[RMDB]
RNA sequence: GGGAACGACUCGAGUAGAGUCGAAAAUCUCCUCUUUUGAGGAGACCUGGUGAGAGCGCUAGGAAGGGCUUUUAACGUUGCAUUGCCCCUAUACACCUUUUAACUGGUGUAUAGUUUGCCUCGUGGGCCAAUUUAAGUUUGCGUAGGAAGCAACGAAAGUACUGUGCGGGUUCGUUUGCAUGGUGCUAAAAGAAACAACAACAACAAC
Reactivity to DMS in 0.01 (KOAc 150mM, MgCl2 10mM, bicine 150mM(pH8.5), 24C), signal-to-noise 3, nucleotides 027 to 156: u000c010u010c000c000u000c010u000u010u000u030g020a020g010g010a010g000a010c040c050u000g020g010u000g010a090g010a100g030c060g030c060u000a100g020g020a160a110g030g010g020c020u000u010u000u000a070a120c060g010u000u000g010c010a130u000u000g000c030c030c060c000u000a000u000a000c000a000c010c000u000u010u000u010a050a170c150u000g000g030u000g010u000a000u000a000g000u000u000u000g020c010c020u010c030g000u000g030g060g010c010c030a060a100u000u000u010a080a060g010u000u000u010g010c000g020u000a080g020g020a140a140g010c020a020a070c050g010a060a140
Notes:
Chemical mapping of a 207-nucleotide RNA with DMS. Values cover nucleotides 27 to 156. The reactions ran in a buffer of 150 mM KOAc, 10 mM MgCl2 and 150 mM bicine (pH 8.5), at 24 C. DMS adducts were read by reverse transcription with MarathonRT.